Overview
Structure probing data (DMS) for a 177-nucleotide construct. The data come from the RNA Mapping Database (RMDB), library OK2TST. The DMS profile rests on 2,226 reads. Values cover nucleotides 27 to 126.
RNA sequence: GGGAACGACUCGAGUAGAGUCGAAAAGGUUUGACCCUGUUGAAAAUGAAGACAUACAUAGGGUUUAUGCUGUAUUGGGUAAAAUAGUGGCAAAUGCUAUGUUAAAGUGUGUCUGUUUAGGUGAUGCCUAUGGCCGUUGAUUCGUCAACGGCCAUAGAAAAGAAACAACAACAACAAC
Reactivity to DMS in 0.01 (KOAc 150mM, MgCl2 10mM, bicine 150mM(pH8.5), 24C), signal-to-noise 2, nucleotides 027 to 126: g020g000u010u010u000g000a250c300c010c010u000g000u010u000g010a050a050a100a090u000g010a170a040g000a030c020a020u000a070c040a030u010a000g000g000g000u000u000u000a050u010g020c000u010g000u000a030u000u010g000g010g020u000a060a080a020a030u000a010g030u010g030g000c020a040a040a020u000g010c020u000a010u000g000u020u010a090a080a150g020u000g010u010g010u000c020u000g010u000u020u010a070g010g000u000g000a110u000g000c120